Chemical mapping of a 177-nucleotide RNA with 2A3. As a SHAPE reagent, 2A3 marks flexible, mostly unpaired nucleotides at the ribose 2'-OH.
RNA sequence: GGGAACGACUCGAGUAGAGUCGAAAACCCGCUUUUCUAUGCCGUGGAUCCAGCGACUCCCCAAGGAUGCCAAAAACCUGAGAGAAGAAGUAGUGAGGAAGGCCAACCUUUAUUAGCGAAACUUCCUGGUGCUGAACACUUUCGAGUGUUCAGCACCAAAAGAAACAACAACAACAAC
Reactivity to 2A3 in 0.01 (KOAc 150mM, MgCl2 10mM, bicine 150mM(pH8.5), 24C), signal-to-noise 1, nucleotides 027 to 126: c000c000c000g000c000u030u040u000u030c000u070a040u140g000c030c010g000u020g140g000a100u040c000c000a000g000c000g000a020c000u030c010c000c010c010a090a000g130g060a060u050g020c010c000a070a000a000a000a090c000c050u140g050a120g050a000g010a060a050g000a050a000g080u010a000g020u000g080a000g030g000a000a000g060g070c050c160a060a170c150c000u040u000u020a150u190u070a010g000c000g000a010a010a000c000u010u000c000c020u080
The data come from the RNA Mapping Database (RMDB), library RFM100. The RNA was probed in 150 mM KOAc, 10 mM MgCl2 and 150 mM bicine (pH 8.5) at 24 C.